[RMDB]
RNA sequence: GGGAACGACUCGAGUAGAGUCGAAAAACCGAGAGGGGGUGCUAGGAACACGGGGGCCCAGUGGAGCCAUGGGAUGCUCCUCCCGAUUCCGUCCAACCCCUUCCCCCGAGGGUCGCCCAGGAAUGGCUAGCCGAGUGGUUCGCCACUCGGAAAAGAAACAACAACAACAAC
Reactivity to DMS in 0.01 (KOAc 150mM, MgCl2 10mM, bicine 150mM(pH8.5), 24C), signal-to-noise 7, nucleotides 027 to 129: a020c010c040g030a090g000a040g000g000g000g020g000u050g000c170u000a090g000g000a050a010c140a100c050g040g030g000g030g040c050c000c030a030g020u040g000g000a000g000c070c000a190u000g020g020g010a230u060g010c110u000c070c010u000c000c000c000g000a300u010u030c020c010g000u000c300c170a030a020c040c020c000c020u030u010c010c010c010c020c040g010a120g010g030g000u010c050g040c070c000c040a150g010g030a100a090u000g000g000c020u000a070g030
Reactivity to 2A3 in 0.01 (KOAc 150mM, MgCl2 10mM, bicine 150mM(pH8.5), 24C), signal-to-noise 5, nucleotides 027 to 129: a000c030c020g020a020g010a000g000g010g010g010g000u020g040c060u090a060g030g020a030a030c140a070c180g020g010g000g020g000c010c030c010a020g020u100g050g130a020g020c030c020a090u080g020g000g040a050u120g030c020u050c010c010u030c000c000c000g010a030u010u000c000c000g040u060c050c020a090a090c000c000c000c000u000u000c000c000c000c000c010g020a030g030g020g010u040c020g000c000c020c000a010g040g050a090a070u090g020g000c020u040a040g010